[RMDB]
About this RNA:
This 177-nucleotide RNA was probed chemically with DMS. It was measured as part of the RMDB library TTRINS. Conditions: 150 mM KOAc, 10 mM MgCl2 and 150 mM bicine (pH 8.5), 24 C. The DMS profile rests on 953 reads.

RNA sequence: GGGAACGACUCGAGUAGAGUCGAAAAGAUAUGGAAAGGCCGUCUCGACCGAAGCGCGAUAAGAACCAGUCGGAAACGACUGAAGUUCUUUUGACGCGUCAAGGUCGAGACGGCCUUUCCUAAGUCACUAAGUACCGUUGUUCGCAACGGUACUUAGAAAAGAAACAACAACAACAAC
Reactivity to DMS in 0.01 (KOAc 150mM, MgCl2 10mM, bicine 150mM(pH8.5), 24C), signal-to-noise 1, nucleotides 027 to 126: g030a040u060a300u000g000g020a000a010a030g000g060c000c000g010u000c000u000c010g030a000c000c010g000a260a300g000c010g050c000g020a150u000a000a030g010a000a000c000c000a010g030u000c000g000g000a170a060a280c000g010a000c000u010g000a080a220g020u000u000c000u000u000u000u010g030a140c000g070c000g040u020c000a020a300g010g000u000c000g000a000g000a000c030g020g020c010c010u000u000u000c000c000u010a000a080g000u010c060a130